[RMDB]
RNA sequence: GGGAACGACUCGAGUAGAGUCGAAAACGACAGAACUUCGGUUCUGUCGAAAUAAAAUCAGCGGUUAAAAAGCUGGCGUUAUAACCGCUGUACGCCAGCUUAAAAGAUUCGUGUUCGCACGAAUCAAGAUCCGAUUAAACUUCGGUUUAAUCGGAUCAAAAGAAACAACAACAACAAC
Reactivity to 2A3 in 0.01 (KOAc 150mM, MgCl2 10mM, bicine 150mM(pH8.5), 24C), signal-to-noise 2, nucleotides 027 to 126: c010g010a000c000a010g000a010a000c000u060u140c250g080g000u010u000c010u010g000u010c000g000a000a000a000u030a010a070a010a090u060c060a010g020c030g120g020u150u170a130a140a020a050a000g010c000u000g010g000c000g000u060u090a140u040a190a030c030c010g000c040u020g040u030a000c000g000c020c000a000g000c000u000u040a010a030a040a040g000a000u020u000c010g000u020g040u020u040c140g050c030a000c000g000a000a000u000c000a010a020
Reactivity to DMS in 0.01 (KOAc 150mM, MgCl2 10mM, bicine 150mM(pH8.5), 24C), signal-to-noise 2, nucleotides 027 to 126: c010g000a020c010a040g010a000a030c000u020u020c180g040g030u000u010c000u000g030u000c020g000a030a050a090u010a070a040a110a070u010c070a040g000c020g000g010u010u020a040a060a110a050a040g000c010u000g010g000c010g030u000u000a060u000a100a140c060c010g020c060u010g020u000a010c010g010c000c000a020g000c020u000u000a040a060a120a120g000a000u000u000c000g020u000g030u000u000c150g050c020a000c000g000a010a000u000c000a070a110